[RMDB]
RNA sequence: GGGAACGACUCGAGUAGAGUCGAAAAGCGUAACGGCUGGGUGUAACCCAACUCUAGGUGUACUGAUUAGCGGGCUUGACUCCGUAACAAAUAGGCACUGGUGGUAAAAAGCAUCCCACCUACUCACAAAGCUCCAAAUUCUUCGGAAUUUGGAGAAGGUUCUAUUUCCGUUCGCGGAAAUAGAACCAAAAGAAACAACAACAACAAC
Reactivity to 2A3 in 0.01 (KOAc 150mM, MgCl2 10mM, bicine 150mM(pH8.5), 24C), signal-to-noise 2, nucleotides 027 to 156: g030c010g000u030a000a050c000g050g050c060u000g030g030g000u050g030u030a050a000c000c000c010a050a080c040u060c040u180a100g030g000u060g010u160a240c030u080g040a090u050u000a050g020c030g000g000g010c050u090u180g080a020c060u020c000c000g000u000a020a010c010a010a080a040u130a070g010g010c010a000c060u060g010g040u060g000g050u130a200a140a010a030a000g050c010a060u090c020c000c010a020c000c000u020a080c000u030c020a050c060a180a120a010g000c010u000c000c000a000a000a000u010u020c010u060u060c080g080g000a010a000u000u000u000g000g000a000g010a000a010

This 207-nucleotide RNA was probed chemically with 2A3. Source: RMDB library M2RFPK, as collected in RNAgym. Conditions: 150 mM KOAc, 10 mM MgCl2 and 150 mM bicine (pH 8.5), 24 C. For 2A3 the reverse transcriptase was SuperScript II with manganese.